This 177-nucleotide RNA was probed chemically with DMS and 2A3. For DMS, 9,751 sequencing reads were counted. For DMS the reverse transcriptase was MarathonRT.
[RMDB]
RNA sequence: GGGAACGACUCGAGUAGAGUCGAAAAGAUAUGGAGUUGUAUGGAGAUGAUGGGUCGGAAACGACCCUACCAUCUAUGAAGUACACCUCCUAAGUCAAAUCGAUUCUGUGUUCGCACAGAAUCGAAACGAAAAGAUGUAGUUCGCUACAUCUUUUCGAAAAGAAACAACAACAACAAC
Reactivity to DMS in 0.01 (KOAc 150mM, MgCl2 10mM, bicine 150mM(pH8.5), 24C), signal-to-noise 5, nucleotides 027 to 126: g000a010u000a010u010g000g000a020g010u000u000g000u000a000u000g000g000a000g010a010u000g010a210u000g000g010g020u000c010g010g000a000a000a020c010g010a010c000c000c000u000a000c180c010a010u000c000u000a300u010g000a110a210g000u000a010c000a000c050c000u000c000c000u000a000a070g000u000c000a060a100a130u000c010g010a010u000u000c000u000g020u000g010u000u010c240g010c000a010c000a000g010a000a000u000c000g000a010a030a150
Reactivity to 2A3 in 0.01 (KOAc 150mM, MgCl2 10mM, bicine 150mM(pH8.5), 24C), signal-to-noise 4, nucleotides 027 to 126: g010a000u010a000u060g000g000a000g010u010u000g010u000a010u020g010g020a010g000a010u020g010a020u050g020g000g000u000c000g000g000a010a000a000c010g000a000c010c010c000u010a020c030c010a000u000c000u080a300u020g000a000a000g010u000a000c000a010c000c000u000c000c000u000a010a010g000u000c000a020a000a210u040c000g010a000u000u000c000u000g000u000g050u100u080c300g080c050a000c000a000g000a000a000u010c000g010a050a020a010
Source: RMDB library TTRDEL, as collected in RNAgym. Conditions: 150 mM KOAc, 10 mM MgCl2 and 150 mM bicine (pH 8.5), 24 C.